About this RNA
Conditions: 150 mM KOAc, 10 mM MgCl2 and 150 mM bicine (pH 8.5), 24 C. This 177-nucleotide RNA was probed chemically with 2A3 and DMS. For 2A3 the reverse transcriptase was SuperScript II with manganese. Reactivities are given for positions 27 through 126. The DMS profile rests on 7,865 reads. It was measured as part of the RMDB library RFM100. For 2A3, 4,967 sequencing reads were counted.
RNA sequence: GGGAACGACUCGAGUAGAGUCGAAAAGGAGUCGGCCAGACAGUCGCUUCCGUCCUGGUGACGGGGGAGGAAAGUCCGGGCUCCAUAGGGCAGGGUGCCAGGUAACGCCUGGGGGGCGAGAGUCCACCUGUACACAACUCUUCGGAGUUGUGUACAGAAAAGAAACAACAACAACAAC
Reactivity to 2A3 in 0.01 (KOAc 150mM, MgCl2 10mM, bicine 150mM(pH8.5), 24C), signal-to-noise 5, nucleotides 027 to 126: g000g000a000g020u050c030g040g100c040c020a030g040a020c020a020g140u030c010g010c050u060u000c000c000g000u010c010c020u110g270g050u250g000a000c020g000g000g000g020g020a030g020g070a090a050a000g010u010c020c010g010g020g000c000u010c010c000a010u100a030g030g020g030c140a070g040g010g030u090g060c000c000a010g000g000u030a070a030c090g060c090c010u010g000g000g010g000g000g000c040g020a060g010a010g060u040c030c010a040c020
Reactivity to DMS in 0.01 (KOAc 150mM, MgCl2 10mM, bicine 150mM(pH8.5), 24C), signal-to-noise 4, nucleotides 027 to 126: g010g000a030g010u000c010g000g010c060c080a170g000a030c060a060g020u010c040g000c000u000u000c000c000g010u010c000c010u050g010g020u070g010a020c010g020g000g000g010g000a010g020g000a070a130a070g020u010c010c040g010g020g010c000u000c000c000a110u040a120g010g000g020c150a100g010g000g020u030g010c000c000a010g010g000u020a120a150c260g000c000c010u000g000g000g000g010g010g000c020g000a150g010a120g010u000c010c060a070c150